[RMDB]
RNA sequence: GGGAACGACUCGAGUAGAGUCGAAAAGGUCGCAUCUUCGGAUGCGACCAAAGAAGCUCAAAGUGACGCAAACUUCCGCGUCAGAAGGAGGAAACGAGGUAAAAAGUGCACCCUUCGGGGUGCACAACGAUCAAUGGUAGUUCGCUACCAUUGAUCGAAAAGAAACAACAACAACAAC
Reactivity to 2A3 in 0.01 (KOAc 150mM, MgCl2 10mM, bicine 150mM(pH8.5), 24C), signal-to-noise 1, nucleotides 027 to 126: g010g000u000c010g000c000a000u000c030u070u070c250g030g000a010u010g000c000g020a000c000c000a010a000a000g010a010a010g100c000u010c050a150a090a000g140u040g030a000c010g040c010a080a170a190c120u250u050c190c070g020c010g030u000c010a000g010a010a020g080g040a010g000g090a050a150a020c080g020a090g000g120u120a090a100a060a040a010g000u000g000c000a000c000c000c040u020u030c200g050g000g000g000u000g000c000a000c000a010a010
Reactivity to DMS in 0.01 (KOAc 150mM, MgCl2 10mM, bicine 150mM(pH8.5), 24C), signal-to-noise 3, nucleotides 027 to 126: g000g000u000c000g030c000a000u000c000u000u010c200g020g000a000u010g020c010g010a000c000c000a000a010a080g010a170a140g000c000u000c010a060a060a110g010u000g020a020c010g000c010a060a100a110c150u010u020c090c180g000c020g020u010c020a040g010a090a130g000g000a070g010g000a060a080a090c140g000a030g000g000u020a060a050a070a090a120g000u000g000c010a020c000c000c000u000u000c150g020g020g020g010u000g000c000a000c000a010a030